[RMDB]
RNA sequence: GGGAACGACUCGAGUAGAGUCGAAAAAUCGGGGAGCCUCGACGAUCUCUUUGAUCUCCUGAAGGAGGAAGGAGCUCUCGAGCGCUCUCCCGCCCCUCGGAUGGGCCGCUUCCGGCGAACGAGCCCGCACCCCAUGUCUUCGGACAUGGGAAAAGAAACAACAACAACAAC
Reactivity to DMS in 0.01 (KOAc 150mM, MgCl2 10mM, bicine 150mM(pH8.5), 24C), signal-to-noise 9, nucleotides 027 to 129: a040u020c100g010g010g000g020a000g000c050c000u020c010g020a000c150g020a000u010c020u000c030u000u000u000g090a190u050c020u000c010c000u020g050a200a160g030g010a020g000g040a030a020g010g000a000g030c090u020c010u010c010g010a000g030c190g040c020u010c010u030c000c000c000g020c050c010c000c020u020c000g020g010a070u080g010g010g040c050c040g030c220u020u030c080c030g020g010c060g000a080a080c050g010a060g000c000c010c000g030c090a160c090
Reactivity to 2A3 in 0.01 (KOAc 150mM, MgCl2 10mM, bicine 150mM(pH8.5), 24C), signal-to-noise 9, nucleotides 027 to 129: a020u120c010g000g000g000g000a000g000c000c000u010c000g010a040c150g000a010u010c010u000c040u020u030u050g270a260u060c000u040c000c040u190g260a250a160g010g000a000g000g000a000a010g010g010a000g000c010u000c000u000c000g000a000g000c150g000c000u000c010u010c000c000c000g010c000c000c000c000u020c020g110g010a100u070g020g100g000c010c000g040c050u120u060c080c040g070g000c050g030a020a030c010g000a020g010c000c000c010g020c020a130c000
Source: RMDB library 15KLIB, as collected in RNAgym. An RNA of 170 nucleotides, treated with DMS and 2A3 and read out base by base.